Description
Structure probing data (DMS and 2A3) for a 177-nucleotide construct. Reactivities are given for positions 27 through 126. For DMS, 4,012 sequencing reads were counted. As a SHAPE reagent, 2A3 marks flexible, mostly unpaired nucleotides at the ribose 2'-OH. The 2A3 profile rests on 3,469 reads. The data come from the RNA Mapping Database (RMDB), library OK2TRN. Conditions: 150 mM KOAc, 10 mM MgCl2 and 150 mM bicine (pH 8.5), 24 C.
RNA sequence: GGGAACGACUCGAGUAGAGUCGAAAAGGUAGCAGAGAAGAGACUAGACUUCAGACUAGAUAGUAUCACACUACGGGUACAUAGUAGAGACAUACAUAGAUGCGUAUGACACAUCAGAGCUGCCAUGAUGCAUAUGCAUCUUCGGAUGCAUAUGCAUAAAAGAAACAACAACAACAAC
Reactivity to DMS in 0.01 (KOAc 150mM, MgCl2 10mM, bicine 150mM(pH8.5), 24C), signal-to-noise 5, nucleotides 027 to 126: g040g010u010a020g020c040a140g010a160g010a070a080g000a160g010a170c080u000a060g000a090c050u000u000c120a140g000a110c030u000a040g000a130u010a060g000u000a040u010c060a090c110a130c120u020a060c100g000g020g020u010a040c090a060u010a060g010u000a050g020a100g020a120c100a030u010a020c050a060u010a100g010a080u000g000c050g010u000a030u000g010a110c070a040c050a060u000c020a070g000a160g000c020u000g000c030c010a090u000g000
Reactivity to 2A3 in 0.01 (KOAc 150mM, MgCl2 10mM, bicine 150mM(pH8.5), 24C), signal-to-noise 2, nucleotides 027 to 126: g000g000u030a000g000c040a000g070a000g020a190a010g060a010g020a040c030u040a030g040a050c020u080u040c090a050g030a080c010u030a020g030a100u090a070g050u030a020u050c020a030c030a030c280u220a060c070g040g000g000u050a020c010a070u050a040g050u030a000g030a000g020a100c010a050u050a010c010a030u110a080g110a120u110g060c030g000u040a030u050g030a010c010a010c010a100u040c000a000g020a010g090c010u000g000c020c000a000u120g030